[RMDB]
RNA sequence: GGGAACGACUCGAGUAGAGUCGAAAAAUGAUGUCAAUUUCCGGUCGACAGAUCUCAGAGCGAGAUACAGUGACCAGGAGUUCACUCUGCCUUGAGCUUCCGUCAGGUGAGCUCGGUGAGAUGGCCUGUCAAAAGGUUAAUUCGUUAACCUUUUGACAAAAGAAACAACAACAACAAC
Reactivity to 2A3 in 0.01 (KOAc 150mM, MgCl2 10mM, bicine 150mM(pH8.5), 24C), signal-to-noise 9, nucleotides 027 to 126: a010u170g050a050u130g060u140c060a040a050u050u070u000c020c010g010g000u010c020g060a050c030a070g050a030u000c000u000c010a160g050a070g260c080g060a000g040a010u110a150c040a040g030u020g070a010c010c010a010g010g010a020g010u160u250c010a000c010u000c010u020g000c000c010u050u290g010a000g000c000u030u010c020c010g120u140c130a080g000g060u140g080a000g000c000u000c010g000g010u100g010a030g000a010u010g020g010c000c010u010
Reactivity to DMS in 0.01 (KOAc 150mM, MgCl2 10mM, bicine 150mM(pH8.5), 24C), signal-to-noise 7, nucleotides 027 to 126: a070u000g010a090u020g010u000c080a050a090u010u010u000c010c030g010g010u000c010g010a110c190a130g000a070u000c010u010c000a170g020a150g020c230g000a010g000a040u000a050c100a090g020u020g010a020c010c010a070g020g010a030g010u000u010c060a030c040u000c010u000g020c010c010u020u020g010a020g020c010u000u000c010c010g010u020c300a080g000g000u020g000a020g010c010u000c010g000g000u000g000a020g010a070u010g000g000c010c020u010

Structure probing data (2A3 and DMS) for a 177-nucleotide construct. 2A3 adducts were read by reverse transcription with SuperScript II with manganese. The RNA was probed in 150 mM KOAc, 10 mM MgCl2 and 150 mM bicine (pH 8.5) at 24 C. Reactivities are given for positions 27 through 126.